About this RNA: An RNA of 177 nucleotides, treated with 2A3 and DMS and read out base by base. The RNA was probed in 150 mM KOAc, 10 mM MgCl2 and 150 mM bicine (pH 8.5) at 24 C. 2A3 adducts were read by reverse transcription with SuperScript II with manganese. Source: RMDB library M2PK50, as collected in RNAgym.
[RMDB]
RNA sequence: GGGAACGACUCGAGUAGAGUCGAAAAUCUUAGCGUUUCGACGCUAAGAAAACGUGGUGGAGGAGGUGGAAAGCUCGGCAUUAUAGGGAUAAAAACAUCUUCAUAUAGGGUCGUUCGCGACCCUAAAGGGUACGUAUUGAUUCGUCAAUACGUACCCAAAAGAAACAACAACAACAAC
Reactivity to 2A3 in 0.01 (KOAc 150mM, MgCl2 10mM, bicine 150mM(pH8.5), 24C), signal-to-noise 1, nucleotides 027 to 126: u010c000u000u010a010g000c010g020u020u050u030c180g090a020c000g000c030u010a020a000g000a000a000a000a000c030g070u060g050g100u090g040g080a130g000g060a040g010g010u160g020g060a000a070a040g010c020u010c050g060g020c000a000u030u030a080u180a100g030g040g050a050u160a100a140a000a000a000c020a010u080c010u230u090c050a000u120a010u020a170g000g000g000u000c000g000u000u010c110g000c010g010a010c040c100c040u000a000a000a060
Reactivity to DMS in 0.01 (KOAc 150mM, MgCl2 10mM, bicine 150mM(pH8.5), 24C), signal-to-noise 2, nucleotides 027 to 126: u000c010u020u000a000g000c010g000u000u000u000c130g000a030c000g030c000u020a000a000g000a010a080a070a120c150g040u000g010g000u020g010g020a080g010g010a110g010g010u000g000g000a080a050a110g010c080u000c090g010g000c070a080u000u010a090u000a120g010g020g040a120u050a050a060a020a070a090c190a080u000c100u000u000c060a110u040a160u000a010g000g000g010u000c000g040u000u000c250g040c030g010a000c000c000c000u000a000a020a050
For 2A3, 974 sequencing reads were counted.